[RMDB]
RNA sequence: GGGAACGACUCGAGUAGAGUCGAAAAGCCCUAUUCGGAGCACUGCAGUUCCGAUAGAAAGGCUAAGCACCUCGCAAUGACGUAAGGUGGGACUUUUCCUUCUGGAACCAAGCGGUUGGUUCCGAGGCAUCUCACAAUUCUUCGGAAUUGUGAGAUGAAAAGAAACAACAACAACAAC
Reactivity to DMS in 0.01 (KOAc 150mM, MgCl2 10mM, bicine 150mM(pH8.5), 24C), signal-to-noise 3, nucleotides 027 to 126: g000c000c000c000u000a110u000u000c000g000g010a040g030c000a080c160u030g000c200a190g010u000u010c000c000g000a020u000a010g000a040a100a130g000g010c020u000a080a160g000c030a020c020c010u010c030g000c010a200a140u010g010a160c130g010u020a020a020g010g020u010g000g010g010a150c110u000u000u010u000c000c000u000u010c080u010g020g010a010a000c000c010a020a040g010c200g000g000u000u000g010g000u000u000c000c000g000a030g000g010
Reactivity to 2A3 in 0.01 (KOAc 150mM, MgCl2 10mM, bicine 150mM(pH8.5), 24C), signal-to-noise 2, nucleotides 027 to 126: g030c000c010c000u000a030u010u040c000g000g000a010g000c020a040c260u300g000c070a090g010u000u000c000c000g000a000u000a000g000a040a040a000g020g000c030u060a040a030g090c000a010c020c000u010c020g020c040a180a300u300g080a260c030g030u050a040a020g000g020u030g000g030g050a040c030u120u070u040u040c000c000u010u060c100u200g000g010a010a010c010c010a070a030g120c100g300g000u050u040g020g000u000u000c010c000g010a010g020g000